[RMDB]
RNA sequence: GGGAACGACUCGAGUAGAGUCGAAAAUGAUAAAGGACGUAGGCUAGAGGAUCGAAGACGAUUAGAGAGACCGUUGUAGUUCUAGCAGUAAACGAUGCCGAUACCGUGGUGCGGAUAGGCGACGCGGCUAUAAAUAUGAGUUCGCUCAUAUUUAUAGAAAAGAAACAACAACAACAAC
Reactivity to 2A3 in 0.01 (KOAc 150mM, MgCl2 10mM, bicine 150mM(pH8.5), 24C), signal-to-noise 4, nucleotides 027 to 126: u140g030a030u080a130a080a060g040g010a010c030g020u040a020g100g000c010u010a000g000a020g060g040a070u130c030g010a040a010g030a010c030g020a040u080u200a090g080a020g010a010g020a140c020c020g000u020u080g050u050a040g020u020u000c010u010a010g000c030a030g080u130a020a130a020c030g030a040u110g060c000c010g010a030u050a040c000c000g010u040g050g010u130g030c020g020g060a160u110a140g130g000c020g010a010c010g000c010g020g000
Reactivity to DMS in 0.01 (KOAc 150mM, MgCl2 10mM, bicine 150mM(pH8.5), 24C), signal-to-noise 7, nucleotides 027 to 126: u020g010a110u010a050a120a140g010g010a090c050g020u000a100g010g010c020u010a040g010a080g000g010a080u010c040g010a120a210g010a040c040g010a060u010u010a080g010a150g010a140g010a050c070c020g010u000u000g010u010a160g000u010u000c020u000a030g010c030a090g000u010a060a070a060c040g000a090u010g010c010c010g000a120u000a090c040c020g010u010g020g010u010g000c030g000g000a120u000a150g010g010c020g000a040c040g000c030g000g000